[RMDB]
RNA sequence: GGGAACGACUCGAGUAGAGUCGAAAACAAGUGUUAGUAUUAUUAGGCACACAUCACGUUCACAGCUUCGCGCAGAGACGGAUAGUGUAUUUGGAUAUAUGGAAGUCAUCCAAAUGCGUUGCUAGAAUAUCAGGCCUAUGUUUGUUCUGGUAGAACCCUACUGUCAGCGAUUCGUCGCUGACAGUAGAAAAGAAACAACAACAACAAC
Reactivity to DMS in 0.01 (KOAc 150mM, MgCl2 10mM, bicine 150mM(pH8.5), 24C), signal-to-noise 1, nucleotides 027 to 156: c030a050a100g010u010g060u000u000a070g020u000a070u000u010a160u000u000a150g010g050c010a110c080a050c060a070u000c020a060c110g050u000u000c040a130c030a140g010c080u000u010c100g000c110g010c060a100g010a160g000a060c050g000g020a110u000a100g070u010g020u000a030u000u000u010g010g000a070u010a050u010a150u010g030g010a110a100g030u010c120a170u020c010c030a020a010a030u000g040c000g050u000u010g020c000u020a090g010a070a090u000a020u010c000a010g000g030c010c050u030a110u010g030u010u000u000g040u000u000c010u000g050g020u010a070g010a070a150c150c090
Reactivity to 2A3 in 0.01 (KOAc 150mM, MgCl2 10mM, bicine 150mM(pH8.5), 24C), signal-to-noise 5, nucleotides 027 to 156: c050a050a060g020u020g030u120u090a060g060u060a080u150u030a070u050u120a160g040g000c030a050c010a000c010a070u030c030a020c160g050u100u040c070a090c020a110g010c020u100u130c130g030c020g000c060a010g030a020g010a100c010g060g000a040u080a090g090u090g010u030a020u030u010u010g030g010a010u020a020u020a040u120g080g060a030a030g050u060c040a010u000c010c000a020a010a020u040g000c030g020u050u020g010c040u070a030g070a130a060u090a030u100c040a000g040g040c000c030u080a090u120g070u000u100u070g030u060u010c010u040g000g030u030a050g040a140a100c030c010
The record gives the reactivity of an RNA of 207 nucleotides to DMS and 2A3. Values cover nucleotides 27 to 156. For 2A3 the reverse transcriptase was SuperScript II with manganese. The 2A3 profile rests on 3,211 reads. The RNA was probed in 150 mM KOAc, 10 mM MgCl2 and 150 mM bicine (pH 8.5) at 24 C. It was measured as part of the RMDB library OK3TST. The DMS profile rests on 1,902 reads. High DMS reactivity at an A or C suggests that its Watson-Crick edge is free.